[RMDB]
RNA sequence: GGGAACGACUCGAGUAGAGUCGAAAAGAUCUUGCUUCAGACAGAUGCUGAUGAUGGCGCAGAGAUUGCAUCGCGUGUCGAUGUCGAGCGGGGUGCACAGUCUCUUGAGCCGUUCCGUGUCCGAGAACUCGAAAUUGGCUAGUUCCGAGUCGAGAUCCAUGGUUGAUGGUUUCGACCAUCAACCAUGAAAAGAAACAACAACAACAAC
Reactivity to DMS in 0.01 (KOAc 150mM, MgCl2 10mM, bicine 150mM(pH8.5), 24C), signal-to-noise 2, nucleotides 027 to 156: g000a050u010c040u000u000g010c030u010u000c040a170g000a140c040a090g000a030u000g010c030u000g000a100u000g020a060u000g030g030c020g010c010a060g000a040g020a040u010u000g000c030a040u010c000g010c000g010u020g010u000c000g000a190u010g070u020c040g010a270g000c010g000g050g020g010u000g050c020a050c130a070g040u000c010u000c000u010u010g010a040g030c000c010g010u000u000c070c100g040u010g030u000c010c020g000a220g000a050a030c010u010c010g020a030a030a090u000u000g040g000c150u000a150g000u010u000c010c000g000a040g020u010c030g010a150g010a140u000c030
Reactivity to 2A3 in 0.01 (KOAc 150mM, MgCl2 10mM, bicine 150mM(pH8.5), 24C), signal-to-noise 5, nucleotides 027 to 156: g040a020u020c020u010u040g000c010u090u060c040a050g010a080c020a010g050a040u050g010c030u020g010a090u040g020a050u130g020g000c040g010c060a010g000a000g000a050u030u030g000c000a010u000c040g040c020g270u140g200u100c040g200a300u290g140u300c020g000a000g010c000g000g080g010g010u000g000c010a020c030a070g080u000c000u000c000u040u110g030a020g010c000c010g000u020u000c000c000g030u020g010u010c030c010g050a060g010a130a020c030u030c060g030a060a150a220u100u080g050g020c030u030a010g130u080u000c020c000g000a000g000u040c030g010a010g010a040u000c010
Structure probing data (DMS and 2A3) for a 207-nucleotide construct. The 2A3 profile rests on 4,239 reads. For 2A3 the reverse transcriptase was SuperScript II with manganese. The data come from the RNA Mapping Database (RMDB), library OK3TST. High DMS reactivity at an A or C suggests that its Watson-Crick edge is free. For DMS, 6,084 sequencing reads were counted. DMS adducts were read by reverse transcription with MarathonRT.